[RMDB]
Chemical mapping of a 177-nucleotide RNA with DMS and 2A3. Reactivities are given for positions 27 through 126. 2A3 is a SHAPE reagent: it acylates the 2'-hydroxyl of flexible nucleotides of all four kinds.

RNA sequence: GGGAACGACUCGAGUAGAGUCGAAAACGUAAUAUGUUCGCAUAUUACGAAAUCUCCAAUCAUGGCUAACCAGGAUCCUCCGAUGAAUUUAAGCCCUCGGUAAAAGGAGCGGGUUCGCCCGCUCCAACUUAGGAAAUAGGUUCGCCUAUUUCCUAAGAAAAGAAACAACAACAACAAC
Reactivity to DMS in 0.01 (KOAc 150mM, MgCl2 10mM, bicine 150mM(pH8.5), 24C), signal-to-noise 5, nucleotides 027 to 126: c000g010u000a000a000u000a000u000g010u000u020c190g010c000a010u000a000u000u000a000c010g000a030a070a130u000c050u000c010c110a110a080u010c100a070u010g010g000c050u000a100a090c070c030a050g000g000a080u010c030c030u000c020c020g000a050u010g000a080a080u010u000u000a080a150g000c040c020c020u000c060g010g010u010a040a060a100a120g010g000a010g010c010g000g000g020u000u010c210g010c000c010c000g010c010u000c000c000a010a010
Reactivity to 2A3 in 0.01 (KOAc 150mM, MgCl2 10mM, bicine 150mM(pH8.5), 24C), signal-to-noise 4, nucleotides 027 to 126: c010g000u020a010a010u000a010u020g020u030u040c080g000c120a010u010a010u010u010a000c000g010a040a030a020u020c040u020c010c010a040a070u090c050a100u130g060g000c020u040a070a060c040c010a050g030g040a080u040c010c030u030c010c030g040a050u090g060a090a180u110u160u180a080a040g010c000c010c000u030c050g110g050u110a040a070a070a140g000g000a000g000c000g000g000g020u020u020c150g040c030c000c020g010c020u000c000c000a000a000
The reactions ran in a buffer of 150 mM KOAc, 10 mM MgCl2 and 150 mM bicine (pH 8.5), at 24 C.